[RMDB]
RNA sequence: GGGAACGACUCGAGUAGAGUCGAAAAAGCAAUUGAUCAGCUUGAUGCGCAAGGCAAAGUCGAACUUGCUGGACUAGCUGCUGCUGAGGCAACACUGAAGCAGCAAACAGCCGUACGGUUGCUUGAACUCUCAGCGCAGAAGUUAUCGGCGCAGGCGACUUUUAGUACCGUUCGCGGUACUAAAAGUAAAAGAAACAACAACAACAAC
Reactivity to 2A3 in 0.01 (KOAc 150mM, MgCl2 10mM, bicine 150mM(pH8.5), 24C), signal-to-noise 4, nucleotides 027 to 156: a000g060c040a050a060u110u110g030a050u160c030a010g020c020u060u080g040a070u080g050c060g010c050a070a050g100g000c020a090a060a040g080u190c060g070a040a080c040u020u060g000c000u030g010g020a030c010u040a040g040c010u020g000c040u090g010c000u000g010a010g050g050c080a100a020c050a030c100u080g040a100a010g000c000a010g000c000a030a040a020c070a030g040c050c020g030u050a050c080g020g030u000u010g000c000u000u040g060a080a100c020u010c010u000c120a020g020c020g000c010a000g010a080a010g030u090u080a090u240c070g040g000c010g000c040a030g030g020c030g010
Reactivity to DMS in 0.01 (KOAc 150mM, MgCl2 10mM, bicine 150mM(pH8.5), 24C), signal-to-noise 2, nucleotides 027 to 156: a060g040c000a090a090u000u000g020a140u000c060a160g010c040u000u000g030a150u000g000c050g030c040a120a090g000g020c060a040a070a130g000u020c030g010a070a190c060u000u000g020c000u010g020g020a070c070u000a080g020c030u000g030c020u010g080c000u000g010a300g000g010c030a050a060c050a300c030u000g000a130a040g000c040a080g040c020a020a040a020c000a060g020c000c000g010u000a090c080g030g050u000u000g000c000u000u020g000a120a120c060u010c030u000c000a070g010c000g040c030a060g010a030a150g000u000u000a100u020c030g010g000c000g000c030a080g000g020c020g010
Annotation: Structure probing data (2A3 and DMS) for a 207-nucleotide construct. DMS adducts were read by reverse transcription with MarathonRT. Reactivities are given for positions 27 through 156. For 2A3, 2,830 sequencing reads were counted.